This 177-nucleotide RNA was probed chemically with DMS and 2A3. For DMS, 10,763 sequencing reads were counted. The reactions ran in a buffer of 150 mM KOAc, 10 mM MgCl2 and 150 mM bicine (pH 8.5), at 24 C. Reactivities are given for positions 27 through 126.
[RMDB]
RNA sequence: GGGAACGACUCGAGUAGAGUCGAAAAAAUAGCGGGUCAAGGUACAACGCAGAGAGAUAGGCUCAUGCCAAGUUCUCUUCGGAGUACCAAGACUUCGGUACAGAAGAGAUACCGACUCUUCAUAGAAUGUCUUAAUUAGAUUCGUCUAAUUAAGACAAAAAGAAACAACAACAACAAC
Reactivity to DMS in 0.01 (KOAc 150mM, MgCl2 10mM, bicine 150mM(pH8.5), 24C), signal-to-noise 9, nucleotides 027 to 126: a060a090u010a040g020c010g010g000g000u000c000a030a300g010g000u000a010c000a020a220c010g020c120a020g000a010g010a030g010a080u000a190g010g010c010u010c280a120u010g010c000c010a080a170g020u010u000c000u000c000u000u000c000g000g010a300g000u000a000c000c000a020a300g000a010c010u000u000c010g010g000u000a040c180a150g000a010a010g000a010g000a060u010a160c030c020g010a140c010u000c000u000u000c010a130u020a110g000a100a090
Reactivity to 2A3 in 0.01 (KOAc 150mM, MgCl2 10mM, bicine 150mM(pH8.5), 24C), signal-to-noise 4, nucleotides 027 to 126: a000a010u170a040g060c030g000g010g000u010c010a000a040g000g010u000a010c000a030a010c010g010c020a000g000a000g000a000g000a060u070a160g010g010c030u090c250a100u300g000c000c010a050a040g050u040u000c000u000c000u000u000c000g000g000a020g000u000a000c000c000a000a000g000a000c000u030u030c010g010g000u090a050c050a060g020a010a000g010a010g010a030u090a120c010c000g070a070c010u010c000u020u000c020a010u090a050g160a100a110